[RMDB]
RNA sequence: GGGAACGACUCGAGUAGAGUCGAAAAGAGGGCCGUCGACACGCGCACCUCCUCGCGGCUGCGAACCAUCUUGUUGGCCUCCAGUGGCGGAAUCAUUAUGGCCGGGUCGAUCUCCCGCACGGUGUGCCUAGUGUCACGUGUUCGCACGUGACACUAGAAAAGAAACAACAACAACAAC
Reactivity to DMS in 0.01 (KOAc 150mM, MgCl2 10mM, bicine 150mM(pH8.5), 24C), signal-to-noise 1, nucleotides 027 to 126: g000a060g010g000g020c100c040g020u000c160g000a040c120a000c050g040c100g000c060a100c040c000u060c080c050u020c060g000c050g000g020c050u030g000c090g000a060a150c020c000a040u010c140u010u000g000u000u000g000g000c050c000u030c080c090a160g000u040g000g030c040g010g010a120a100u050c040a030u000u030a030u020g000g010c170c020g000g000g030u000c060g000a080u030c030u000c040c020c000g040c000a050c050g000g020u030g000u000g000c030
Reactivity to 2A3 in 0.01 (KOAc 150mM, MgCl2 10mM, bicine 150mM(pH8.5), 24C), signal-to-noise 5, nucleotides 027 to 126: g050a010g000g030g010c030c000g060u130c110g150a070c050a030c100g090c000g010c030a170c000c010u040c040c000u020c040g020c020g010g020c020u180g050c060g030a040a040c000c010a020u040c060u110u110g050u070u080g120g010c020c030u060c050c070a180g060u160g090g000c020g030g090a050a080u080c040a060u060u150a040u070g020g000c000c000g010g000g030u000c000g010a120u000c030u010c040c000c000g000c010a020c050g070g020u090g010u000g050c000